Record summary: Chemical mapping of a 207-nucleotide RNA with DMS and 2A3. 2A3 adducts were read by reverse transcription with SuperScript II with manganese. The reactions ran in a buffer of 150 mM KOAc, 10 mM MgCl2 and 150 mM bicine (pH 8.5), at 24 C. It was measured as part of the RMDB library RNAMAK. Reactivities are rounded to 0.1 and cut off at 0 and 3.

[RMDB]
RNA sequence: GGGAACGACUCGAGUAGAGUCGAAAAUCCUAAGUCAGUACGACAUUGAAUCCUUGGAUUUAUAACGGGAGGACUCGGAAACGAGUCCGAAGAACGUUAUUGUCAGGAUUCAGUCAAGUACUGAUAUGGAAAAUCAGUCUAGUUCGCUAGACUGAAAGUGGUAAACGUAGUUCGCUACGUUUACCACAAAAGAAACAACAACAACAAC
Reactivity to DMS in 0.01 (KOAc 150mM, MgCl2 10mM, bicine 150mM(pH8.5), 24C), signal-to-noise 1, nucleotides 027 to 156: u020c010c010u000a040a250g000u000c000a000g010u000a000c030g000a300c230a040u010u020g030a020a000u000c000c000u000u000g010g090a030u010u000u000a000u000a030a060c040g000g020g090a240g020g020a030c000u010c000g000g000a080a210a250c000g000a020g000u000c020c000g000a030a140g000a150a160c040g050u020u000a010u000u000g000u000c000a050g000g070a000u000u000c000a020g000u000c070a030a300g030u000a020c000u010g020a020u000a120u000g040g000a020a050a150a190u000c000a000g000u000c000u000a030g040u000u020c300g020c000u030a000g010a030c000u000g020a000a040a080
Reactivity to 2A3 in 0.01 (KOAc 150mM, MgCl2 10mM, bicine 150mM(pH8.5), 24C), signal-to-noise 4, nucleotides 027 to 156: u050c010c010u030a110a020g020u000c000a000g010u000a000c010g010a030c050a070u020u070g000a000a000u010c000c030u080u200g190g020a040u120u300u030a010u070a000a000c010g000g000g020a020g000g000a000c000u010c010g010g030a020a100a070c020g010a000g000u020c000c000g000a000a000g010a010a000c000g000u000u000a010u000u020g020u000c010a010g010g000a000u000u000c000a000g000u000c020a000a130g000u000a000c000u000g000a010u010a040u030g010g050a030a100a000a200u040c000a000g000u000c000u010a000g020u030u030c180g030c130u010a000g000a000c000u010g000a030a010a000